[RMDB]
RNA sequence: GGGAACGACUCGAGUAGAGUCGAAAAAGAAAGAGCGUAUUCGCGUCUUGACGUGAAUGAGCCUAGACUGUAGGCUCUAGUGGGAUUGUAACGCUCACUCCCAAAACGCUAUUCCACAGUCAGUUAAGGUACCUUUAUCUUUCGAGAUAAAGGUACCAAAAGAAACAACAACAACAAC
Reactivity to 2A3 in 0.01 (KOAc 150mM, MgCl2 10mM, bicine 150mM(pH8.5), 24C), signal-to-noise 3, nucleotides 027 to 126: a020g130a020a040a000g030a000g000c000g000u030a030u010u030c000g000c010g000u020c080u080u170g110a020c010g000u010g020a020a040u060g000a000g000c010c000u060a100g090a260c110u120g120u120a010g000g020c000u000c000u020a030g020u050g030g010g040a020u000u080g060u080a090a030c020g010c030u000c000a030c040u030c010c000c000a030a030a000a010c070g010c020u040a030u030u040c020c010a030c000a020g130u150c020a040g010u110u150a160a060
Reactivity to DMS in 0.01 (KOAc 150mM, MgCl2 10mM, bicine 150mM(pH8.5), 24C), signal-to-noise 3, nucleotides 027 to 126: a080g000a060a100a100g000a030g010c010g030u000a120u000u000c000g020c010g020u000c060u010u010g010a010c020g030u000g010a010a020u000g000a010g010c000c000u010a050g000a070c070u000g040u000a040g000g000c010u000c030u010a040g040u000g020g010g000a030u000u000g000u010a070a100c090g010c040u000c000a090c140u000c000c000c000a040a050a080a040c110g010c030u000a030u010u000c030c020a050c060a140g010u010c070a070g000u000u010a100a140